[RMDB]
RNA sequence: GGGAACGACUCGAGUAGAGUCGAAAACAAAUCGUUGAUGUGGCAUACUUCACCUCAUCAUAUUGUGUGGGGUUGAAAACUACAUUGAAACAAUUUGUUAAUCAAUAUAUUGAGGUGGAAUAUGCCAAAUCGGUAAGAUGUUCGCAUCUUACCGAUUAAAAGAAACAACAACAACAAC
Reactivity to DMS in 0.01 (KOAc 150mM, MgCl2 10mM, bicine 150mM(pH8.5), 24C), signal-to-noise 3, nucleotides 027 to 126: c030a090a080a060u040c110g020u000u010g010a090u000g030u000g000g040c020a010u000a020c070u010u000c000a030c000c010u020c000a010u000c110a030u010a000u010u000g000u030g040u000g000g000g000g000u010u010g010a140a070a090a080c040u000a020c060a050u010u010g000a110a070a060c030a080a050u010u020u020g020u000u000a110a100u010c020a010a020u000a030u000a130u010u000g010a020g010g040u010g000g010a010a020u000a010u000g010c020c000a000
Reactivity to 2A3 in 0.01 (KOAc 150mM, MgCl2 10mM, bicine 150mM(pH8.5), 24C), signal-to-noise 5, nucleotides 027 to 126: c030a000a060a040u160c080g030u040u050g040a130u080g010u060g030g000c000a010u000a000c010u000u010c000a000c000c000u000c000a030u020c050a010u010a010u020u040g010u000g020u070g010g060g010g000u050u110g070a060a050a030a020c020u070a020c000a070u040u150g090a070a060a020c030a020a080u040u040u060g060u060u100a120a110u110c010a000a010u010a000u000a030u040u040g000a000g000g010u010g000g010a020a000u020a010u000g000c010c000a020